Overview:
An RNA of 177 nucleotides, treated with DMS and 2A3 and read out base by base. For DMS, 640 sequencing reads were counted. The reactions ran in a buffer of 150 mM KOAc, 10 mM MgCl2 and 150 mM bicine (pH 8.5), at 24 C.
RNA sequence: GGGAACGACUCGAGUAGAGUCGAAAAGAAAAACGCCAAAAAGCAUUUAAAGUAUGCGGUCUACGCGGGCAUGUUACCAUGCAAAGUUAUCGACAAUAACUUAGACCAAGUACGAAAGUACAAAAAACGAGACAUGAUGAUUCGUCAUCAUGUCUCGAAAAGAAACAACAACAACAAC
Reactivity to DMS in 0.01 (KOAc 150mM, MgCl2 10mM, bicine 150mM(pH8.5), 24C), signal-to-noise 1, nucleotides 027 to 126: g010a060a120a050a060a050c120g060c030c160a020a000a050a090a110g000c060a000u000u030u000a040a130a060g000u020a030u000g040c270g000g010u000c010u000a100c300g010c110g000g000g000c000a010u000g000u000u010a120c230c010a050u000g020c000a130a020a000g000u000u000a000u000c140g030a070c130a090a040u000a020a000c000u000u000a030g010a010c020c010a020a150g020u000a010c010g000a080a020a010g010u000a010c020a000a000a040a040a120a110
Reactivity to 2A3 in 0.01 (KOAc 150mM, MgCl2 10mM, bicine 150mM(pH8.5), 24C), signal-to-noise 1, nucleotides 027 to 126: g200a010a060a010a040a040c090g020c010c020a010a060a020a000a030g020c020a060u100u140u200a160a130a040g050u030a020u010g000c000g000g000u000c020u000a040c140g000c020g120g070g000c010a000u000g000u020u220a130c090c040a000u000g000c000a030a000a060g010u010u010a060u070c080g230a120c100a060a020u010a020a030c000u000u050a000g010a010c010c010a000a040g040u000a000c010g000a040a000a010g010u070a040c040a010a080a000a000a060a020